[RMDB]
Structure probing data (2A3 and DMS) for a 207-nucleotide construct.
RNA sequence: GGGAACGACUCGAGUAGAGUCGAAAAGGGGUCUCGUAGCAGAGCGGACCCAGCUUGGAUUUAUGUGGCUGAAGCCUCCACGGCCACAUUGUCAGCUGCUAACGCUCUGAUUACGAGACGGAGGCACCCAAAACAUCGUAGAUUCGUCUACGAUGAAGCUACCCAUUAGUUUCGACUAAUGGGUAGCAAAAGAAACAACAACAACAAC
Reactivity to 2A3 in 0.01 (KOAc 150mM, MgCl2 10mM, bicine 150mM(pH8.5), 24C), signal-to-noise 3, nucleotides 027 to 156: g060g000g000g000u000c000u000c000g010u000a000g010c010a000g010a010g000c040g010g000a010c000c010c010a010g000c020u100u150g230g010a090u200u300u110a030u060g010u000g030g000c000u010g040a180a020g060c010c010u060c030c040a050c020g010g000c000c000a000c000a000u000u020g000u000c020a000g000c000u000g030c030u010a080a000c000g000c020u010c000u000g000a010u000u000a000c000g000a000g000a000c010g000g010a000g010g020c030a070c020c000c000a050a080a000a030c000a000u000c000g000u000a010g000a020u040u020c170g060u000c220u000a000c000g000a000u000g010a020a010
Reactivity to DMS in 0.01 (KOAc 150mM, MgCl2 10mM, bicine 150mM(pH8.5), 24C), signal-to-noise 2, nucleotides 027 to 156: g020g040g010g020u000c000u000c010g040u000a020g010c040a050g020a020g030c020g020g000a260c300c300c000a010g000c010u010u000g030g020a030u000u000u010a030u020g030u010g010g000c000u010g000a070a080g040c040c000u020c000c020a300c050g020g020c010c010a060c020a000u000u000g000u000c050a110g050c010u000g000c050u000a080a300c080g030c000u000c000u020g010a070u010u000a010c020g000a030g060a020c000g000g020a080g060g000c050a160c000c000c000a080a070a090a280c000a020u010c000g040u000a000g010a100u000u020c300g040u010c030u000a020c000g000a020u000g020a120a120
The reactions ran in a buffer of 150 mM KOAc, 10 mM MgCl2 and 150 mM bicine (pH 8.5), at 24 C.